[RMDB]
RNA sequence: GGGAACGACUCGAGUAGAGUCGAAAAUGGCUAUGCCACACUUCAUGUUUCUCUGGGCAAUUGAGGAAACAUGAGUCCAGGAGAGCAUAGAUGUCUUCAUGGUUUGUUCUUGAUGGCUUCCAGGGUUUUCACAAAGCUAGGGCUGGGAGACCCAGGACUCCUACUAGGAUUUCGAUCCUAGUAGGAGAAAAGAAACAACAACAACAAC
Reactivity to 2A3 in 0.01 (KOAc 150mM, MgCl2 10mM, bicine 150mM(pH8.5), 24C), signal-to-noise 4, nucleotides 027 to 156: u120g060g000c030u060a020u080g010c010c010a040c010a000c040u120u110c010a020u030g020u000u080u010c050u010c020u060g090g070g070c110a140a180u130u110g060a110g000g170a070a040a020c010a010u000g010a000g020u060c040c010a020g070g090a080g010a010g020c010a010u020a040g060a060u080g060u050c050u160u070c080a110u080g100g070u070u080u120g050u050u010c010u070u070g060a120u070g060g020c020u020u010c020c010a050g030g020g000u040u030u010u030c160a210c070a150a210a040g010c020u130a140g080g150g000c010u000g000g000g000a000g000a020c000c000c000a010g000g030a010
The data come from the RNA Mapping Database (RMDB), library OK3TST. This 207-nucleotide RNA was probed chemically with 2A3. The reactions ran in a buffer of 150 mM KOAc, 10 mM MgCl2 and 150 mM bicine (pH 8.5), at 24 C.